[RMDB]
RNA sequence: GGGAACGACUCGAGUAGAGUCGAAAACGGCGAACGAAGCUCGGCCCGAUGCGGACUCGGCGCUCAGGCAACGGGCGCGCCGGUAUGCGAAUACCACCGCCUCGUUGGGAUCUUUGGCGACUGCCUGCAGCUUUGAGAGCUGCGGCCGCGAGAGCGAAGAUCUAGUGUUUUUCGAAACACUAGAUCUAAAAGAAACAACAACAACAAC
Reactivity to 2A3 in 0.01 (KOAc 150mM, MgCl2 10mM, bicine 150mM(pH8.5), 24C), signal-to-noise 5, nucleotides 027 to 156: c030g030g020c040g040a100a040c030g070a140a040g030c070u050c050g080g000c000c010c010g020a100u160g000c020g000g070a090c070u030c080g050g000c010g000c040u030c020a040g090g020c040a050a040c060g010g000g000c030g010c020g020c010c060g000g020u030a020u040g090c070g050a040a030u050a050c000c000a020c020c020g030c010c030u110c050g000u090u120g030g030g040a070u010c060u110u090u120g020g010c020g060a110c070u120g010c000c030u090g000c010a030g000c010u140u210u300g190a230g020a000g000c000u000g000c000g020g000c000c000g010c010g010a040g000a020g020c040g040a050
Reactivity to DMS in 0.01 (KOAc 150mM, MgCl2 10mM, bicine 150mM(pH8.5), 24C), signal-to-noise 2, nucleotides 027 to 156: c060g010g010c040g020a090a090c050g000a090a120g020c010u000c030g010g010c030c040c020g000a100u000g000c020g050g010a140c060u010c050g030g010c030g020c010u000c040a090g010g000c000a090a090c040g010g000g010c040g030c050g020c010c010g080g030u000a010u000g020c250g020a300a040u010a020c020c020a130c050c020g010c020c020u000c060g000u000u000g000g000g010a100u000c030u000u000u000g030g030c030g010a110c030u000g000c020c020u000g020c030a080g020c000u010u010u010g020a210g010a080g000c010u000g010c040g000g020c010c000g000c020g000a120g010a120g000c030g010a170
Annotation:
Structure probing data (2A3 and DMS) for a 207-nucleotide construct. It was measured as part of the RMDB library OK3TST. Conditions: 150 mM KOAc, 10 mM MgCl2 and 150 mM bicine (pH 8.5), 24 C. 2A3 adducts were read by reverse transcription with SuperScript II with manganese.